[RMDB]
RNA sequence: GGGAACGACUCGAGUAGAGUCGAAAAGAAUUUGGCAUUGUUCGUUGGCUGGCAGACGAAGGGAUGCUAGUCGUAGUCGGUUCCAUUGCUUUGUUGGUGUGACACGAUCUCGAGCUGAAUCCACUCGGAAAAUACGGGGAUUCGUCCCCGUAUUUUCAAAAGAAACAACAACAACAAC
Reactivity to 2A3 in 0.01 (KOAc 150mM, MgCl2 10mM, bicine 150mM(pH8.5), 24C), signal-to-noise 4, nucleotides 027 to 126: g120a120a180u130u070u090g050g000c020a030u010u080g040u080u050c050g040u090u100g000g000c000u020g010g000c010a000g010a060c020g060a120a080g120g030g000a020u030g000c010u040a010g000u010c020g030u080a020g070u050c020g030g020u020u000c020c000a020u020u100g080c050u070u100u070g070u020u110g080g010u050g010u070g050a000c000a010c110g020a020u020c000u010c030g010a040g020c090u060g070a030a050u050c020c010a060c030u040c050g040
Reactivity to DMS in 0.01 (KOAc 150mM, MgCl2 10mM, bicine 150mM(pH8.5), 24C), signal-to-noise 2, nucleotides 027 to 126: g000a070a110u010u000u000g020g000c030a050u000u000g000u020u000c050g060u030u020g030g000c000u000g000g020c020a060g040a190c010g020a100a070g030g010g020a110u020g000c020u010a010g000u000c020g000u010a060g030u000c010g030g000u000u000c000c000a130u040u000g000c090u020u000u020g010u020u000g000g000u000g010u030g010a090c100a090c060g000a060u010c030u010c000g000a010g030c070u000g000a080a100u000c050c060a210c070u000c110g010